[RMDB]
An RNA of 177 nucleotides, treated with DMS and 2A3 and read out base by base. 2A3 adducts were read by reverse transcription with SuperScript II with manganese. For DMS the reverse transcriptase was MarathonRT. The RNA was probed in 150 mM KOAc, 10 mM MgCl2 and 150 mM bicine (pH 8.5) at 24 C. Values cover nucleotides 27 to 126. It was measured as part of the RMDB library OK2TST.
RNA sequence: GGGAACGACUCGAGUAGAGUCGAAAACGUGGCAAGGACGUGCUGAUUGUUGAAGAUAUCAUCGACUCGGGGAAUACACUGUCGAAAGUGCGUGAGAUCUUAAGCCUGCGCGAACCGAAGUCGCUGGCUGUUAAAAUUGAUUCGUCAAUUUUAACAGAAAAGAAACAACAACAACAAC
Reactivity to DMS in 0.01 (KOAc 150mM, MgCl2 10mM, bicine 150mM(pH8.5), 24C), signal-to-noise 9, nucleotides 027 to 126: c100g020u010g010g010c050a080a170g000g010a130c050g020u000g010c030u000g010a130u000u000g010u000u000g010a100a100g000a090u010a060u000c030a040u000c030g010a050c020u000c040g010g000g000g000a140a110u010a150c090a040c040u000g000u010c200g000a090a090a050g010u000g000c050g020u000g010a060g000a060u010c090u010u010a100a100g010c020c020u000g010c030g010c040g010a120a200c040c030g000a070a100g010u000c020g020c040u000g000g010
Reactivity to 2A3 in 0.01 (KOAc 150mM, MgCl2 10mM, bicine 150mM(pH8.5), 24C), signal-to-noise 9, nucleotides 027 to 126: c030g010u050g020g000c040a060a050g040g020a040c030g020u030g020c030u050g030a270u120u070g030u030u050g030a040a020g020a060u040a020u080c020a010u040c010g020a010c010u010c020g010g000g010g060a040a020u130a120c060a020c060u090g060u140c030g080a190a090a020g040u060g020c010g010u040g040a040g000a020u020c020u050u050a060a020g030c000c010u020g000c020g000c000g020a040a030c010c000g030a080a010g020u020c010g010c020u030g040g000